[RMDB]
An RNA of 177 nucleotides, treated with DMS and read out base by base.
The reactions ran in a buffer of 150 mM KOAc, 10 mM MgCl2 and 150 mM bicine (pH 8.5), at 24 C.
DMS adducts were read by reverse transcription with MarathonRT.
Reactivities are given for positions 27 through 126.
RNA sequence: GGGAACGACUCGAGUAGAGUCGAAAAGUUGUCAACAAAGAUGUUAAACAGUGCUGGUCCCAACACUGACCCCUGAGGAAUGCCACUCGUCACUGGUCUCCACUUGGACAAUGAGCCAUUGACCGCAGUGGGAGAUUUAUUUCGAUAAAUCUCCCACAAAAGAAACAACAACAACAAC
Reactivity to DMS in 0.01 (KOAc 150mM, MgCl2 10mM, bicine 150mM(pH8.5), 24C), signal-to-noise 2, nucleotides 027 to 126: g030u000u000g010u010c040a090a110c120a090a060a070g010a050u030g010u020u020a090a050a230c020a000g050u000g000c040u010g020g000u010c000c010c000a180a110c060a030c030u010g030a290c060c020c020c000u010g020a170g030g010a090a060u000g010c040c050a050c040u000c090g000u000c020a010c050u000g010g000u000c030u030c010c060a030c180u000u000g000g000a110c070a080a060u010g010a090g020c030c010a040u000u000g040a080c090c130g020c110a050